[RMDB]
RNA sequence: GGGAACGACUCGAGUAGAGUCGAAAAGAUCGCCUGCCGCGUAUGGCUGGCUUACGGUAACCGGUUCGAUGGGCGCGGUGGGAAGCAAAGGCUGUCGAACAUCUGUAGGCACUCUGAAAUAUAGGUAAGGUGACUACGCUUUCGAGCGUAGUCACCUAAAAGAAACAACAACAACAAC
Reactivity to 2A3 in 0.01 (KOAc 150mM, MgCl2 10mM, bicine 150mM(pH8.5), 24C), signal-to-noise 1, nucleotides 027 to 126: g040a050u170c130g020c000c000u000g050c040c000g040c000g060u070a030u120g020g010c150u000g050g150c040u000u240a000c090g000g080u000a000a140c020c010g000g000u120u110c000g120a120u070g000g110g050c000g000c020g020g000u000g000g110g100a160a000g020c020a010a060a010g090g110c050u040g000u150c000g000a000a000c000a080u030c060u000g030u000a010g000g080c000a000c000u150c100u100g000a150a050a000u300a060u020a080g190g000u050a020